[RMDB]
RNA sequence: GGGAACGACUCGAGUAGAGUCGAAAAGAUAUGGACAUGACAUUCUGGACUAGAACAGACAUGAAGGAGGGUCGGAAACGACCUGACUUCAACAGCUGUUCUAGUCCAGAAUGCAUGUCCUAAGUCAUCUCCUUGUGUUGUUCGCAACACAAGGAGAAAAAGAAACAACAACAACAAC
Reactivity to DMS in 0.01 (KOAc 150mM, MgCl2 10mM, bicine 150mM(pH8.5), 24C), signal-to-noise 2, nucleotides 027 to 126: g010a080u020a300u000g010g010a000c000a020u000g000a180c010a020u010u000c000u000g000g000a040c000u020a000g010a010a040c000a020g000a050c090a300u010g000a030a000g020g020a300g010g010g000u000c000g030g000a100a060a250c020g020a000c000c000u000g000a260c000u000u000c000a040a100c290a100g010c000u010g010u000u000c020u010a000g040u010c010c000a000g000a010a000u010g010c010a000u000g000u000c000c000u010a000a080g000u010c050a110
An RNA of 177 nucleotides, treated with DMS and read out base by base. DMS (dimethyl sulfate) methylates the pairing face of unpaired adenines and cytosines. Values cover nucleotides 27 to 126. The RNA was probed in 150 mM KOAc, 10 mM MgCl2 and 150 mM bicine (pH 8.5) at 24 C.